[RMDB]
An RNA of 177 nucleotides, treated with 2A3 and DMS and read out base by base. For DMS, 5,601 sequencing reads were counted. The 2A3 profile rests on 4,332 reads. The data come from the RNA Mapping Database (RMDB), library OK1LIB. Values cover nucleotides 27 to 126.

RNA sequence: GGGAACGACUCGAGUAGAGUCGAAAAACGGCGUCGUUGAACCCCAAGAAGGACUCGCAUUGCUUGCCGCGACGAGGAUCAUGAUGGCGACGGCCGGUGCUGCCCGAUGACCAACGACCCGGCCGAGGACGAUAGUGGAGUUCGCUCCACUAUCGUCAAAAGAAACAACAACAACAAC
Reactivity to 2A3 in 0.01 (KOAc 150mM, MgCl2 10mM, bicine 150mM(pH8.5), 24C), signal-to-noise 5, nucleotides 027 to 126: a000c030g020g010c050g000u040c000g000u040u050g110a140a100c000c000c000c020a000a070g090a050a090g080g010a050c020u020c020g030c070a090u040u120g020c020u060u090g050c040c020g020c000g020a040c020g020a070g050g030a020u080c010a090u200g090a040u130g040g000c010g030a100c000g030g000c010c020g020g030u070g030c020u070g000c000c030c010g040a120u120g050a070c050c050a080a050c040g020a030c020c000c010g020g000c030c010g020a060g100
Reactivity to DMS in 0.01 (KOAc 150mM, MgCl2 10mM, bicine 150mM(pH8.5), 24C), signal-to-noise 3, nucleotides 027 to 126: a110c060g010g010c080g020u000c000g020u000u000g010a100a170c060c020c010c040a090a070g020a140a060g010g000a090c050u020c020g000c120a090u010u010g020c150u010u010g020c120c050g010c030g020a110c030g000a100g000g000a080u030c080a070u030g010a090u020g010g000c050g000a160c100g000g000c010c020g000g010u010g040c080u020g000c030c000c020g000a030u030g000a090c100c030a020a060c170g010a040c030c000c010g000g000c010c000g010a070g040